[RMDB]
RNA sequence: GGGAACGACUCGAGUAGAGUCGAAAAGUAUAGCAUGACUGGCAAUGCGUAUACGAUGAAUCAGCCAGUAAAGAAUCCGUUGUGCGAAAGCACUUCGGUAAUGCAUAAUCGGUUCGAGUACAGCCCGCUACGAGAACCGUUGUUAGUACGGGCAAGACCAUAGGUCAUACUUCGGUAUGACCUAUGGAAAAGAAACAACAACAACAAC
Reactivity to DMS in 0.01 (KOAc 150mM, MgCl2 10mM, bicine 150mM(pH8.5), 24C), signal-to-noise 1, nucleotides 027 to 156: g030u000a110u000a010g050c010a040u020g020a140c040u000g000g000c020a110a050u000g000c010g000u010a080u010a060c090g020a220u000g050a180a070u020c080a130g000c010c000a070g000u000a070a080a170g000a270a170u000c000c000g000u020u010g030u020g020c020g000a200a050a300g000c030a020c000u010u000c000g010g000u010a000a040u010g080c090a140u000a110a180u010c030g020g000u000u010c000g020a300g010u000a020c030a080g020c040c030c030g030c190u000a080c030g000a300g000a040a020c040c000g000u010u000g020u000u000a140g010u000a090c110g000g010g050c060a210a110g000a240
Reactivity to 2A3 in 0.01 (KOAc 150mM, MgCl2 10mM, bicine 150mM(pH8.5), 24C), signal-to-noise 2, nucleotides 027 to 156: g060u060a020u080a130g000c000a000u010g080a050c020u000g030g000c050a110a010u050g000c000g130u090a060u060a140c180g090a210u260g070a030a100u070c020a020g030c010c010a000g000u030a000a070a040g040a000a020u080c010c000g010u010u030g000u000g010c000g040a040a040a000g000c000a000c000u000u000c000g010g020u010a060a030u050g010c010a100u040a170a130u190c040g000g040u000u000c000g000a000g000u030a030c030a020g030c000c000c000g000c020u030a000c000g020a000g010a150a000c000c010g000u010u000g000u010u040a120g040u010a090c080g010g000g000c070a040a010g060a000
Chemical mapping of a 207-nucleotide RNA with DMS and 2A3. Values cover nucleotides 27 to 156. For 2A3, 982 sequencing reads were counted. DMS adducts were read by reverse transcription with MarathonRT. The reactions ran in a buffer of 150 mM KOAc, 10 mM MgCl2 and 150 mM bicine (pH 8.5), at 24 C. For DMS, 1,750 sequencing reads were counted. High 2A3 reactivity points to a flexible backbone, as in loops and unpaired stretches. 2A3 adducts were read by reverse transcription with SuperScript II with manganese.